[RMDB]
RNA sequence: GGGAACGACUCGAGUAGAGUCGAAAACCAGCUUGCCUGUGUCCUAGGGAAUUGGAAGGUCAUCCUUCACAGGAUCGUGUGGAAGUCCUGCUCGGGGCGCAAGCAUUAAAACCAUUCGAGCUAGUCAAAAACCGGCUGAUCUUCGGAUCAGCCGGAAGUUCGUUACUAGGUUCGCCUAGUAACGAACAAAAGAAACAACAACAACAAC
Reactivity to 2A3 in 0.01 (KOAc 150mM, MgCl2 10mM, bicine 150mM(pH8.5), 24C), signal-to-noise 1, nucleotides 027 to 156: c010c000a020g110c070u070u030g020c000c000u030g010u060g020u070c050c010u110a300g000g010g040a190a300u280u170g000g030a050a010g000g030u160c050a120u180c020c000u010u030c020a000c000a000g050g020a070u070c070g060u150g020u100g300g050a090a110g010u000c000c020u020g030c000u000c010g000g010g010g000c020g010c000a020a000g000c000a000u030u150a030a050a000a010c050c050a060u090u140c010g060a040g040c100u160a010g110u110c070a000a030a000a030a100c000c000g000g030c000u000g000a000u020c000u040u100c170g080g000a000u020c010a000g010c000c000g000g000a000a000
Source information
Structure probing data (2A3) for a 207-nucleotide construct. The data come from the RNA Mapping Database (RMDB), library M2RFPK.